[RMDB]
RNA sequence: GGGAACGACUCGAGUAGAGUCGAAAACCCCGUUGAGAAGAGUCUUAGGUCGCUCUCCGCACCUCUCUCCCGGCGCCACGAGACCUCAUCUCCGAGACGGAAGCUUUGUGGUAGCUAGCAGGGAAGAAGAAAUGGAAGAAGACCGAGAAGGCUACUCGUACCUAGUAAAGUUCGCUUUACUAGGUACAAAAGAAACAACAACAACAAC
Reactivity to 2A3 in 0.01 (KOAc 150mM, MgCl2 10mM, bicine 150mM(pH8.5), 24C), signal-to-noise 4, nucleotides 027 to 156: c000c000c010c050g090u090u160g040a100g010a160a040g050a030g010u000c020u040u050a060g020g010u010c020g030c130u010c010u000c030c000g040c020a140c030c010u030c010u000c020u010c020c000c010g010g000c000g000c000c010a000c000g040a020g050a120c010c050u090c020a230u080c070u070c070c100g060a090g070a110c080g050g030a050a030g050c010u060u200u300g040u000g020g000u020a190g040c040u030a050g160c070a060g020g010g010a030a060g010a030a000g020a030a100a010u120g020g000a060a070g030a040a020g000a030c000c010g020a010g030a020a010g010g000c010u060a130c010u030c030
Reactivity to DMS in 0.01 (KOAc 150mM, MgCl2 10mM, bicine 150mM(pH8.5), 24C), signal-to-noise 2, nucleotides 027 to 156: c000c000c000c040g070u000u000g000a160g010a160a080g010a070g000u010c010u000u010a170g010g000u000c010g000c150u000c030u020c010c050g040c170a230c060c020u000c000u000c020u010c050c010c060g000g000c000g010c000c020a040c030g050a050g020a020c000c020u000c030a110u000c020u010c190c210g020a230g020a070c040g040g030a040a040g010c020u000u000u000g000u000g010g020u000a030g020c030u000a110g050c040a160g020g000g020a060a010g000a130a090g020a030a150a170u000g010g020a080a110g020a080a180g000a040c020c000g020a090g010a100a090g010g020c000u000a110c050u000c070
The data come from the RNA Mapping Database (RMDB), library VIROID. Chemical mapping of a 207-nucleotide RNA with 2A3 and DMS. Values cover nucleotides 27 to 156. Conditions: 150 mM KOAc, 10 mM MgCl2 and 150 mM bicine (pH 8.5), 24 C.